[RMDB]
Structure probing data (DMS and 2A3) for a 177-nucleotide construct. Reactivities are given for positions 27 through 126. The reactions ran in a buffer of 150 mM KOAc, 10 mM MgCl2 and 150 mM bicine (pH 8.5), at 24 C. For 2A3 the reverse transcriptase was SuperScript II with manganese. For 2A3, 4,653 sequencing reads were counted. The DMS profile rests on 1,581 reads. Source: RMDB library M2PK90, as collected in RNAgym.
RNA sequence: GGGAACGACUCGAGUAGAGUCGAAAAACUAGGAGCGCACAUCUCUCUAAGACUGUACGACAGUCUGUCUCUCUAGCACGCUUGUUCAACGACAGAGAGAGAGCGUUGGAACAAGUGUGCAACGAAAGUCAUUAGACCUGUUCGCAGGUCUAAUGACAAAAGAAACAACAACAACAAC
Reactivity to DMS in 0.01 (KOAc 150mM, MgCl2 10mM, bicine 150mM(pH8.5), 24C), signal-to-noise 3, nucleotides 027 to 126: a070c130u000a090g000g000a060g020c090g000c090a040c130a090u000c020u000c020u000c070u010a090a070g020a020c010u010g020u000a060c210g000a250c300a030g020u000c000u000g000u010c060u000c000u010c040u000a210g000c010a010c000g010c000u000u000g010u000u000c010a010a010c030g010a080c020a150g000a200g000a130g010a040g010a080g010c030g000u000u000g010g020a020a010c000a000a010g020u000g000u000g010c000a010a050c210g010a060a050a070
Reactivity to 2A3 in 0.01 (KOAc 150mM, MgCl2 10mM, bicine 150mM(pH8.5), 24C), signal-to-noise 3, nucleotides 027 to 126: a000c060u080a060g000g060a040g030c040g040c030a030c040a210u060c040u000c000u000c000u030a070a020g010a020c010u030g100u150a030c060g050a040c070a010g020u010c020u050g010u000c070u000c000u000c040u070a040g000c010a020c000g000c000u000u000g010u000u020c000a000a010c020g060a060c040a050g200a010g030a010g000a010g020a050g250c000g000u010u020g190g030a010a000c010a000a000g010u000g000u000g000c000a010a000c020g070a040a010a030